Structure probing data (DMS and 2A3) for a 177-nucleotide construct. Reactivities are given for positions 27 through 126. The 2A3 profile rests on 3,532 reads. It was measured as part of the RMDB library OK1LIB.
RNA sequence: GGGAACGACUCGAGUAGAGUCGAAAAGACGCCUGAUGGCGAACGUGCGCAAGAUAAGAAUGGUGGUAUAUACUGCCCAGAAUAACUAAUGGACGGCAGAGCGCACGAACCACCAACGUCCACCAGAAAUUAAUGAGUCCUUCGGGACUCAUUAAUUAAAAGAAACAACAACAACAAC
Reactivity to DMS in 0.01 (KOAc 150mM, MgCl2 10mM, bicine 150mM(pH8.5), 24C), signal-to-noise 4, nucleotides 027 to 126: g010a210c010g020c060c000u010g040a190u030g070g000c000g000a150a110c000g010u000g000c000g060c000a100a070g000a260u070a120a060g000a120a150u020g020g010u010g010g010u000a120u010a100u000a070c060u010g000c010c000c020a120g000a100a100u030a050a110c180u050a090a140u010g010g010a120c170g010g030c050a040g000a190g000c000g000c010a010c010g000a050a060c040c020a060c040c020a060a080c070g000u020c000c010a100c060c050a090g000a160
Reactivity to 2A3 in 0.01 (KOAc 150mM, MgCl2 10mM, bicine 150mM(pH8.5), 24C), signal-to-noise 4, nucleotides 027 to 126: g110a020c000g020c050c040u300g120a250u300g020g000c010g010a010a010c010g010u010g000c010g000c030a090a100g040a300u180a110a070g050a120a020u070g000g000u030g030g040u030a110u020a030u030a150c030u080g010c000c000c000a080g070a180a110u190a090a020c100u100a100a070u090g060g040a010c000g010g030c020a030g000a010g040c000g000c000a000c000g000a000a000c010c000a010c000c030a010a020c060g020u040c010c000a000c000c020a050g020a000